Description:
The record gives the reactivity of an RNA of 177 nucleotides to 2A3 and DMS. The RNA was probed in 150 mM KOAc, 10 mM MgCl2 and 150 mM bicine (pH 8.5) at 24 C. DMS adducts were read by reverse transcription with MarathonRT. It was measured as part of the RMDB library OK2TRN. For 2A3 the reverse transcriptase was SuperScript II with manganese.

RNA sequence: GGGAACGACUCGAGUAGAGUCGAAAAGGAUGCAACGUAGUAAUAUGUGUCAUUGCUAGCUCUUGAAUGACACAUUACUAGUCGUGGUUUGAUACAAGAGCUAGAUCGAGUUACGACAUCUGUAUCGCUACUAGAGACUAUUCGUAGUUUCUAGUAGAAAAGAAACAACAACAACAAC
Reactivity to 2A3 in 0.01 (KOAc 150mM, MgCl2 10mM, bicine 150mM(pH8.5), 24C), signal-to-noise 9, nucleotides 027 to 126: g040g000a010u010g010c010a030a020c070g040u030a050g000u010a020a070u060a070u250g060u010g020u030c030a080u010u180g090c020u030a020g020c020u040c010u090u120g120a110a040u070g000a010c000a000c000a020u020u020a020c020u030a030g040u020c030g010u020g010g030u020u020u050g030a010u000a030c030a030a030g020a010g060c020u020a010g010a010u020c020g000a000g020u010u010a010c010g010a010c010a020u040c040u030g010u010a010u010c010g000
Reactivity to DMS in 0.01 (KOAc 150mM, MgCl2 10mM, bicine 150mM(pH8.5), 24C), signal-to-noise 9, nucleotides 027 to 126: g000g000a020u000g010c010a050a110c300g010u000a020g010u000a030a040u000a070u010g020u000g010u000c030a060u010u000g010c030u000a020g010c030u000c020u000u000g010a110a070u000g000a030c020a020c020a050u000u000a030c080u000a090g010u000c080g010u000g000g000u000u000u000g010a080u000a110c090a040a040g000a020g000c020u000a030g000a000u000c070g000a060g000u000u000a020c020g000a050c030a090u010c130u000g020u000a030u000c030g010